[RMDB]
RNA sequence: GGGAACGACUCGAGUAGAGUCGAAAAGACAAUAGCGUAGGGAACCAAGCAAAGAGGUAUGAAAUCCCACGGUAGAAGGCUUGGUUCUAGCCGUGGGAAGAAGAAGUCCCACUCCCUACGCCGAUAAGGAUAGCAUUAACUUCGGUUAAUGCUAUCCAAAAGAAACAACAACAACAAC
Reactivity to DMS in 0.01 (KOAc 150mM, MgCl2 10mM, bicine 150mM(pH8.5), 24C), signal-to-noise 3, nucleotides 027 to 126: g010a150c160a090a040u010a080g010c010g020u000a010g010g000g000a010a040c000c020a040a070g020c130a080a080a130g010a140g000g010u010a050u000g000a070a050a090u000c000c000c000a030c010g000g010u000a040g000a040a010g030g020c130u010u000g020g010u000u000c040u000a040g020c010c010g010u000g010g000g000a020a000g000a020a010g010a090a090g000u000c010c000c010a300c010u010c000c000c000u000a020c000g030c000c150g010a050u000a090a110
Reactivity to 2A3 in 0.01 (KOAc 150mM, MgCl2 10mM, bicine 150mM(pH8.5), 24C), signal-to-noise 3, nucleotides 027 to 126: g100a020c050a040a210u090a170g010c000g010u010a000g000g000g000a000a020c020c010a030a000g040c040a090a130a050g120a090g060g000u090a060u090g060a010a020a100u010c000c000c000a000c000g000g020u050a060g040a130a000g100g050c090u110u120g060g010u080u030c010u020a020g030c030c010g000u000g000g000g000a000a000g030a000a000g020a010a000g030u030c010c000c010a020c020u010c000c000c000u010a000c000g000c000c000g010a060u040a140a060
An RNA of 177 nucleotides, treated with DMS and 2A3 and read out base by base. For DMS, 3,042 sequencing reads were counted.